[RMDB]
Source: RMDB library OK3TST, as collected in RNAgym.
Chemical mapping of a 207-nucleotide RNA with 2A3 and DMS.
The reactions ran in a buffer of 150 mM KOAc, 10 mM MgCl2 and 150 mM bicine (pH 8.5), at 24 C.
DMS adducts were read by reverse transcription with MarathonRT.
RNA sequence: GGGAACGACUCGAGUAGAGUCGAAAACUAACAUUAGAUGCCUCCUAUGUGGUUAAGUCGCAAGAUAUCGCAAAAAAUCAAUCAAUUAUCACAUUAACUGUUAAAUUAAAAGCAAAUGGCUAUGCAUAUAUUACUGGGGCAAGCACUAAGCCGUUAAAUAUAUGUGAUCCUUCGGGAUCACAUAUAUAAAAGAAACAACAACAACAAC
Reactivity to 2A3 in 0.01 (KOAc 150mM, MgCl2 10mM, bicine 150mM(pH8.5), 24C), signal-to-noise 2, nucleotides 027 to 156: c010u020a040a000c010a110u120u100a040g060a110u080g010c000c010u030c000c000u100a060u050g040u020g020g020u010u050a090a090g030u080c000g000c050a010a030g060a110u140a020u090c050g010c120a050a050a100a070a020a090u120c070a050a080u050c010a020a070u100u070a110u200c020a010c020a060u070u120a090a050c010u030g010u080u030a050a090a100u040u130a080a120a040a010g030c040a010a040a070u060g000g000c000u020a000u070g000c120a030u100a010u040a010u280u070a070c110u090g000g020g000g040c000a030a010g080c100a000c050u040a040a020g000c000c000g060u040u070a030a180
Reactivity to DMS in 0.01 (KOAc 150mM, MgCl2 10mM, bicine 150mM(pH8.5), 24C), signal-to-noise 1, nucleotides 027 to 156: c030u000a050a140c020a100u000u020a070g050a120u000g020c000c010u000c020c050u000a120u020g050u000g000g020u010u050a080a140g010u000c050g020c040a060a180g000a050u000a020u000c100g000c070a000a000a090a080a060a100u000c050a120a140u020c040a030a090u000u000a050u010c030a080c020a030u000u010a070a090c040u010g000u000u000a060a030a100u000u010a080a070a140a120g000c060a070a050a100u010g000g030c000u000a040u000g040c000a130u000a100u020a050u000u010a080c050u010g040g020g050g060c020a020a080g030c020a030c060u000a050a220g010c000c000g000u000u000a020a040
Reactivities are given for positions 27 through 156.